[RMDB]
RNA sequence: GGGAACGACUCGAGUAGAGUCGAAAAGAUAUGGACCAGCAACAGCUGUCGGAUCGGAAACGAUCCACAGACAUGCUGAGUCCUAAGUCGGAACACUAUGCUAUUCGUUCGCGAAUAGCAUAGUGAAGUAACCUACUGACUUCGGUCAGUAGGUUACAAAAGAAACAACAACAACAAC
Reactivity to DMS in 0.01 (KOAc 150mM, MgCl2 10mM, bicine 150mM(pH8.5), 24C), signal-to-noise 3, nucleotides 027 to 126: g000a020u010a300u000g000g000a010c000c000a010g010c000a040a070c290a170g010c000u010g010u000c210g060g000a010u000c000g010g010a120a120a140c000g010a000u000c000c010a010c000a000g000a080c090a190u000g000c000u000g000a130g010u000c000c000u000a030a050g000u000c020g000g000a160a190c010a000c000u000a000u000g000c010u010a000u000u000c000g030u000u020c290g000c000g010a020a000u000a000g010c010a000u000a000g000u000g000a020a100
Reactivity to 2A3 in 0.01 (KOAc 150mM, MgCl2 10mM, bicine 150mM(pH8.5), 24C), signal-to-noise 1, nucleotides 027 to 126: g020a010u020a050u120g000g000a000c020c010a000g000c010a010a130c050a190g100c000u020g020u180c250g010g000a000u000c010g000g000a050a050a050c010g000a010u000c000c000a000c000a000g000a050c010a030u070g000c010u040g050a100g050u000c000c000u000a080a020g040u010c020g030g030a130a000c000a000c000u000a000u000g040c000u000a010u020u000c020g040u040u080c300g020c010g190a010a000u000a020g000c000a010u000a010g000u000g010a000a000